[RMDB]
Chemical mapping of a 177-nucleotide RNA with 2A3 and DMS.
For DMS the reverse transcriptase was MarathonRT.

RNA sequence: GGGAACGACUCGAGUAGAGUCGAAAAGAGCGUCGAGAGACGAAGAGAAGUGCACCGAUCAGCAAAGGAGAACGUAAUGGUGCACAAGAGUAAGUCAGUGCAACGUUCUCAGGGCACUGGAGGCAGAGAUCGUCGUCCGAUUCGUCGGACGACGAUCAAAAGAAACAACAACAACAAC
Reactivity to 2A3 in 0.01 (KOAc 150mM, MgCl2 10mM, bicine 150mM(pH8.5), 24C), signal-to-noise 1, nucleotides 027 to 126: g020a000g000c000g000u030c020g050a020g000a000g000a010c090g000a110a010g030a020g080a300a000g040u050g000c070a150c010c020g010a150u220c110a140g030c100a060a000a220g140g020a070g000a000a000c020g080u050a070a000u150g150g000u000g000c000a000c000a000a010g000a000g030u080a120a080g020u070c020a000g000u000g000c000a000a000c020g000u050u000c000u000c010a010g000g000g000c020a020c000u000g000g000a050g040g000c010a000g000a000
Reactivity to DMS in 0.01 (KOAc 150mM, MgCl2 10mM, bicine 150mM(pH8.5), 24C), signal-to-noise 1, nucleotides 027 to 126: g000a090g000c000g000u000c000g010a260g000a120g000a110c000g000a100a070g050a160g020a010a120g050u020g020c000a020c000c000g000a100u050c130a190g150c180a060a070a060g030g000a090g000a010a000c040g000u010a060a210u010g000g000u000g020c020a020c070a050a070g000a050g040u000a260a040g000u060c010a110g010u000g000c010a160a000c000g000u000u000c000u010c000a140g000g000g040c090a010c000u000g000g010a070g030g010c000a120g000a210
As a SHAPE reagent, 2A3 marks flexible, mostly unpaired nucleotides at the ribose 2'-OH. Conditions: 150 mM KOAc, 10 mM MgCl2 and 150 mM bicine (pH 8.5), 24 C. Source: RMDB library OK1LIB, as collected in RNAgym.